[RMDB]
Chemical mapping of a 177-nucleotide RNA with DMS and 2A3. 2A3 adducts were read by reverse transcription with SuperScript II with manganese. For DMS the reverse transcriptase was MarathonRT.

RNA sequence: GGGAACGACUCGAGUAGAGUCGAAAAAUCCGAAAUGCGCUGAACACAGCGGUGAUCGGCGGGGUGGACCUGGUGGUGUCGGUCGGCGGGACCGGGGUGACGCCUCGCGAUGUCACCCCGGAAGCCACUACUAGACCAGGUUCGCCUGGUCUAGUAGAAAAGAAACAACAACAACAAC
Reactivity to DMS in 0.01 (KOAc 150mM, MgCl2 10mM, bicine 150mM(pH8.5), 24C), signal-to-noise 6, nucleotides 027 to 126: a090u020c000c000g020a060a090a110u010g010c020g010c020u000g010a110a120c220a100c050a110g020c080g020g020u000g000a150u000c030g010g000c070g010g010g000g010u000g010g010a060c050c020u000g000g030u010g000g010u000g010u000c070g010g010u000c090g020g000c020g010g010g010a110c000c000g010g010g000g020u000g010a020c010g000c020c020u000c270g010c200g000a020u000g010u000c010a020c000c000c000c000g000g000a030a060g010c030c020a180
Reactivity to 2A3 in 0.01 (KOAc 150mM, MgCl2 10mM, bicine 150mM(pH8.5), 24C), signal-to-noise 3, nucleotides 027 to 126: a000u030c010c000g010a050a020a080u220g040c030g000c020u010g020a170a010c150a020c020a180g080c100g120g020u050g020a080u070c020g020g000c010g020g030g020g010u040g030g020a030c030c020u030g040g030u060g000g020u040g060u060c050g020g010u030c050g020g000c030g010g050g060a020c010c020g000g000g010g000u020g000a010c000g020c000c040u080c080g040c090g010a010u040g000u000c010a000c000c020c040c000g000g000a000a000g010c000c000a030

Description:
Reactivities are given for positions 27 through 126.